[RMDB]
An RNA of 177 nucleotides, treated with DMS and 2A3 and read out base by base.
The reactions ran in a buffer of 150 mM KOAc, 10 mM MgCl2 and 150 mM bicine (pH 8.5), at 24 C.
2A3 adducts were read by reverse transcription with SuperScript II with manganese.
High 2A3 reactivity points to a flexible backbone, as in loops and unpaired stretches.
RNA sequence: GGGAACGACUCGAGUAGAGUCGAAAAAGGAAGGGGAUGGAAGCCGGGACGUGGUCGAACACAACGCGCGCCGGCGCUACGGAAAGGUUGCCCGAGCGCGAUGUGUCCGGGCGCGAGCGCAUCGCGACUACGUGGGGAGGUUCGCCUCCCCACGUAGAAAAGAAACAACAACAACAAC
Reactivity to DMS in 0.01 (KOAc 150mM, MgCl2 10mM, bicine 150mM(pH8.5), 24C), signal-to-noise 2, nucleotides 027 to 126: a070g000g000a070a100g030g000g010g000a100u000g000g010a070a070g000c050c080g000g000g010a140c030g030u000g010g030u010c030g020a070a030c010a010c000a030a090c040g020c000g000c010g000c120c120g010g020c120g000c020u000a000c050g010g010a100a130a100g000g000u000u000g020c000c000c070g000a170g010c030g030c000g000a010u000g020u000g010u000c040c000g000g010g000c020g000c020g010a060g000c140g020c060a070u010c060g020c060g010a300
Reactivity to 2A3 in 0.01 (KOAc 150mM, MgCl2 10mM, bicine 150mM(pH8.5), 24C), signal-to-noise 2, nucleotides 027 to 126: a000g080g010a030a060g050g000g010g000a030u090g050g010a100a000g030c010c020g040g010g020a040c020g020u040g000g300u040c000g040a040a000c020a000c010a030a090c010g000c010g000c000g120c260c010g030g000c100g010c020u050a020c010g090g160a220a070a060g190g020u060u080g020c020c000c000g010a030g000c010g000c000g010a010u030g000u010g000u050c020c030g000g010g020c010g000c020g010a040g040c090g020c060a050u060c070g000c020g030a060